[RMDB]
Source: RMDB library RNAMAK, as collected in RNAgym. The record gives the reactivity of an RNA of 207 nucleotides to DMS and 2A3. For DMS, 2,417 sequencing reads were counted. DMS adducts were read by reverse transcription with MarathonRT. Reactivities are given for positions 27 through 156. The RNA was probed in 150 mM KOAc, 10 mM MgCl2 and 150 mM bicine (pH 8.5) at 24 C. The 2A3 profile rests on 2,691 reads. For 2A3 the reverse transcriptase was SuperScript II with manganese.
RNA sequence: GGGAACGACUCGAGUAGAGUCGAAAAUAAGCUUCGGCUUAGUAUAGUCCUAAGUCUCCCUGACUUCGAGGAGUAAGAGGUCUCGGAAACGAGACUACCCACCUUACUCUCCCCACCGAAGUUUGGGAGAUAUGGAGAUCAGUUGGUUCGCCAACAACGAUCUUCCUAAGUUCGCUUAGGAAGAUCGAAAAGAAACAACAACAACAAC
Reactivity to DMS in 0.01 (KOAc 150mM, MgCl2 10mM, bicine 150mM(pH8.5), 24C), signal-to-noise 2, nucleotides 027 to 156: u010a020a000g000c030u000u010c300g080g000c020u010u000a000g010u010a200u010a130g000u000c040c000u000a090a220g000u000c030u000c010c000c010u020g010a010c010u020u000c010g020a300g000g010a070g000u010a010a080g000a150g030g010u020c000u000c000g030g020a120a160a290c020g000a020g020a030c010u010a040c000c000c060a300c220c000u000u000a030c040u000c010u000c140c060c080c070a300c230c000g020a010a020g010u000u000u000g000g000g000a000g020a000u000a030u000g000g000a010g000a040u000c030a070g020u000u000g000g000u010u000c120g000c030c010a000a110c050a110a150
Reactivity to 2A3 in 0.01 (KOAc 150mM, MgCl2 10mM, bicine 150mM(pH8.5), 24C), signal-to-noise 2, nucleotides 027 to 156: u040a020a000g000c020u030u130c240g050g000c000u060u000a030g030u100a130u220a120g140u030c010c010u020a170a020g000u000c000u000c000c000c010u010g010a000c010u000u000c000g040a040g000g000a000g010u000a000a000g000a000g040g000u010c000u010c000g000g040a070a040a040c010g000a000g020a000c000u120a130c050c030c000a040c000c010u010u010a010c000u000c010u050c080c030c000c010a050c020c020g000a000a000g000u020u020u060g000g000g000a000g010a000u000a000u000g000g000a030g030a130u200c110a050g000u010u030g060g020u060u080c150g060c100c020a020a020c010a010a020